Structure probing data (2A3 and DMS) for a 207-nucleotide construct.

RNA sequence: GGGAACGACUCGAGUAGAGUCGAAAAUCACACAGUAAUUCUCUAGCAGACUAAGAUUUCUAACUUUGAGGCCAAGGCACUUUUGCCUUGUUCCAUGACCCUUGGACAGCUGGGAUUCUUUCUCUGGAUGAAGAAUAGACAGUGAGGAAGAAGGAAAGACUUAUCAGUACUUCGGUACUGAUAAGUCAAAAGAAACAACAACAACAAC
Reactivity to 2A3 in 0.01 (KOAc 150mM, MgCl2 10mM, bicine 150mM(pH8.5), 24C), signal-to-noise 4, nucleotides 027 to 156: u070c000a000c010a020c010a040g070u110a040a120u140u000c030u000c020u070a050g050c020a010g030a070c030u070a090a020g010a130u060u120u080c030u110a110a170c070u070u100u150g120a100g020g000c000c010a010a000g000g050c010a080c080u080u150u300u170g010c000c000u000u000g010u040u000c010c000a030u070g130a120c030c010c000u000u010g060g030a040c020a060g040c050u010g000g000g030a010u040u020c010u010u050u020c020u000c030u020g090g060a090u100g050a060a080g040a030a050u080a060g090a060c060a040g060u030g060a010g020g020a010a020g020a010a020g040g010a100a050a010
Reactivity to DMS in 0.01 (KOAc 150mM, MgCl2 10mM, bicine 150mM(pH8.5), 24C), signal-to-noise 2, nucleotides 027 to 156: u000c030a100c060a140c040a090g030u000a040a140u000u010c010u000c050u010a150g010c040a090g020a020c080u000a080a050g000a130u000u010u010c020u000a030a020c050u010u000u030g000a080g000g040c300c040a020a030g030g000c010a090c270u000u010u000u000g030c000c030u000u000g030u000u000c030c020a100u010g000a150c030c000c010u030u010g030g060a070c060a100g010c010u000g000g000g000a070u000u010c010u000u010u010c020u000c030u000g040g020a170u000g030a070a080g020a050a070u000a130g020a110c080a060g030u000g000a030g000g010a050a100g000a070a050g010g020a080a140a180